An RNA of 177 nucleotides, treated with 2A3 and DMS and read out base by base. The 2A3 profile rests on 1,249 reads. The DMS profile rests on 1,481 reads. For 2A3 the reverse transcriptase was SuperScript II with manganese. The data come from the RNA Mapping Database (RMDB), library OK2TST.
RNA sequence: GGGAACGACUCGAGUAGAGUCGAAAAGCCGAUUGCUGGAGCUGCCCGACAUCAAGUGCGUCUACUGGGCCGGUGGAAAUCCGUUCCACCACCACCAGAACCUGCCGCGGCUGCGUCGUGCACUGUCGUGCACAAUCAGCUUCGGCUGAUUGUGCACAAAAGAAACAACAACAACAAC
Reactivity to 2A3 in 0.01 (KOAc 150mM, MgCl2 10mM, bicine 150mM(pH8.5), 24C), signal-to-noise 2, nucleotides 027 to 126: g050c000c010g120a170u080u280g010c100u090g040g070a010g010c080u020g020c010c060c000g040a070c010a080u110c050a080a000g090u030g050c000g030u020c050u100a080c010u030g040g010g030c070c090g020g010u020g000g000a010a030a090u160c110c120g150u040u030c000c000a010c000c010a020c010c010a060c010c030a020g010a050a060c000c070u040g020c020c000g000c050g110g010c030u050g000c000g030u080c050g040u010g000c030a030c040u120g070u300c020
Reactivity to DMS in 0.01 (KOAc 150mM, MgCl2 10mM, bicine 150mM(pH8.5), 24C), signal-to-noise 2, nucleotides 027 to 126: g030c020c020g000a060u000u010g020c040u000g020g000a100g000c150u000g020c020c070c000g000a030c020a100u020c050a030a040g000u000g000c040g010u010c020u000a100c020u000g020g010g100c300c130g000g030u010g000g000a040a060a140u010c210c210g010u000u000c030c010a050c010c010a050c040c100a140c030c000a030g010a090a130c180c120u020g000c050c030g010c070g010g020c000u000g010c130g020u000c060g000u000g010c030a030c020u000g010u000c110